[RMDB]
Structure probing data (2A3) for a 207-nucleotide construct. Reactivities are given for positions 27 through 156. The data come from the RNA Mapping Database (RMDB), library M2RFPK. The 2A3 profile rests on 863 reads. For 2A3 the reverse transcriptase was SuperScript II with manganese.

RNA sequence: GGGAACGACUCGAGUAGAGUCGAAAAUAGCGAAGUAGGAUUUUAUGCGUCAAAUGUUCACAGGCUGGGGAGUCGCCGUGAAACGAAAAGCAGAAAGCGUGCUGCUUACGAUAUAAUUUCCGCACCCAUAAGAAGUCUCUGUUCGCAGAGACUUCAACGUCUGACCAAUGUUCGCAUUGGUCAGACGAAAAGAAACAACAACAACAAC
Reactivity to 2A3 in 0.01 (KOAc 150mM, MgCl2 10mM, bicine 150mM(pH8.5), 24C), signal-to-noise 1, nucleotides 027 to 156: u150a010g050c030g030a060a020g070u090a060g040g000a020u020u000u020u030a020u040g030c000g000u020c040a060a070a170u120g000u000u010c010a010c060a080g010g010c020u100g040g000g000g050a090g070u050c020g000c020c000g010u010g020a160a030a040c020g030a080a030a020a000g030c000a000g040a050a110a000g190c110g140u190g080c010u000g000c020u010u000a000c010g030a010u000a000u000a090a050u010u020u000c000c010g040c000a050c010c000c010a010u080a090a140g000a000a000g020u030c000u010c000u000g040u060u070c190g010c030a000g000a010g030a030c000u000u000c000a000a000